[RMDB]
RNA sequence: GGGAACGACUCGAGUAGAGUCGAAAACGGUCUGGCACUCCGUAGCUGCGGGAUGGCUGACAAUUGUCUCCGCCCCUGGCAGGGCUAGGGAGGGAACUGCCAUCAGUUCACCCAGCCUGGCAUGUUGGGAGGUGCCACGCUGGCUGGGGUAGGUGGGCCGCUGGAAUUACUUCGGUAAUUCCAGCGGAAAAGAAACAACAACAACAAC
Reactivity to 2A3 in 0.01 (KOAc 150mM, MgCl2 10mM, bicine 150mM(pH8.5), 24C), signal-to-noise 2, nucleotides 027 to 156: c020g010g030u100c030u010g040g000c020a010c010u040c020c010g210u060a020g010c010u020g010c030g030g050g020a110u150g040g020c120u020g040a030c030a090a260u220u300g040u050c030u030c000c000g070c020c000c000c000u040g180g000c070a090g120g060g000c070u130a120g010g020g030a080g080g030g000a030a030c040u040g030c030c010a070u200c010a070g030u060u050c040a110c010c000c000a000g000c020c000u040g060g000c010a020u160g000u110u100g030g000g050a070g000g090u060g000c000c010a030c020g000c040u030g000g020c040u000g000g000g000g020u030a020g000g090u100g030g000g000